[RMDB]
RNA sequence: GGGAACGACUCGAGUAGAGUCGAAAACUAACCUCCUUGGAAUAUUACCUCACUCAUUCACACCUACCACACAACUCUCAAUAAACGUAGGAAUGGCUAUCCCCCUAUGAGCCGGUACCGUCGCCACACCGACGUUUCCAUUCGUGGAAACGUCGGUAAAAGAAACAACAACAACAAC
Reactivity to 2A3 in 0.01 (KOAc 150mM, MgCl2 10mM, bicine 150mM(pH8.5), 24C), signal-to-noise 1, nucleotides 027 to 126: c020u000a000a120c000c000u160c000c030u030u010g010g060a160a040u080a210u180u110a060c000c000u010c060a000c000u070c100a070u060u000c020a000c000a020c000c000u000a000c010c000a010c000a020c030a190a080c000u080c000u010c000a100a080u120a160a120a000c030g010u050a010g130g000a140a050u070g000g010c040u180a140u140c020c000c000c000c000u040a090u240g050a040g060c000c000g040g000u010a000c000c030g050u050c020g000c000c000a060c000
Structure probing data (2A3) for a 177-nucleotide construct.
Conditions: 150 mM KOAc, 10 mM MgCl2 and 150 mM bicine (pH 8.5), 24 C.
Source: RMDB library OK1LIB, as collected in RNAgym.